[RMDB]
RNA sequence: GGGAACGACUCGAGUAGAGUCGAAAAGAUAUGGACCGAUGGUGAACUACCUCGGGGUCAUCGGAAACGAUGACAAGAGGCACCCGCUCGGUCCUAAGUCAAAGUAAUCGCCUUCGGGCGAUUACAACAUGUAGAGCUGGUUCGCCAGCUCUACAUGAAAAGAAACAACAACAACAAC
Reactivity to DMS in 0.01 (KOAc 150mM, MgCl2 10mM, bicine 150mM(pH8.5), 24C), signal-to-noise 3, nucleotides 027 to 126: g020a050u000a300u000g000g020a010c010c010g030a000u000g010g010u000g010a090a040c090u010a300c010c010u000c010g000g010g010g000u000c000a020u020c020g000g000a140a090a140c010g010a000u000g010a000c000a180a120g000a050g000g030c010a040c030c000c040g010c060u000c000g000g000u000c000c000u000a020a070g000u000c030a140a130a130g020u000a010a000u010c000g010c000c000u000u030c280g030g020g010c000g000a000u000u000a000c000a090a180
Reactivity to 2A3 in 0.01 (KOAc 150mM, MgCl2 10mM, bicine 150mM(pH8.5), 24C), signal-to-noise 2, nucleotides 027 to 126: g040a020u060a070u150g000g000a000c020c010g020a090u300g020g040u030g020a120a120c060u170a100c300c010u030c020g080g130g230g010u030c010a000u000c030g000g010a130a040a040c020g000a000u000g020a000c050a020a020g020a000g030g000c000a010c000c010c060g000c020u020c020g000g000u010c010c000u010a020a000g000u010c010a000a030a100g000u000a000a000u000c000g020c000c000u020u090c260g110g000g000c000g000a000u000u000a000c000a000a000
Record summary:
An RNA of 177 nucleotides, treated with DMS and 2A3 and read out base by base. The DMS profile rests on 2,876 reads. For 2A3, 4,349 sequencing reads were counted. DMS adducts were read by reverse transcription with MarathonRT. Reactivities are given for positions 27 through 126.